[RMDB]
RNA sequence: GGGAACGACUCGAGUAGAGUCGAAAAGAAAGAGGCUGCAACUACGGUAAGCGGUAUCCAGCCGAUGUUUUCAAUACUGCAUUUGAAUACACGUGCACGGAUAACGCUCAUUGUUUUUCGCAUGCAACGUCGCCUUGCCAUUCGUGGCAAGGCGACGAAAAGAAACAACAACAACAAC
Reactivity to 2A3 in 0.01 (KOAc 150mM, MgCl2 10mM, bicine 150mM(pH8.5), 24C), signal-to-noise 2, nucleotides 027 to 126: g270a010a130a000g120a040g020g000c000u010g050c000a010a010c010u010a000c000g020g010u020a000a000g000c000g000g000u000a000u030c000c020a000g000c050c000g190a190u000g010u000u020u000u000c000a010a010u020a150c190u260g070c100a260u000u040u000g010a000a000u010a020c000a000c060g070u280g100c090a090c130g000g010a020u020a000a000c000g020c000u010c000a010u030u020g040u000u000u000u000u050c080g000c020a070u220g020c000a060a000

Structure probing data (2A3) for a 177-nucleotide construct.
The 2A3 profile rests on 912 reads.
Source: RMDB library RFM100, as collected in RNAgym.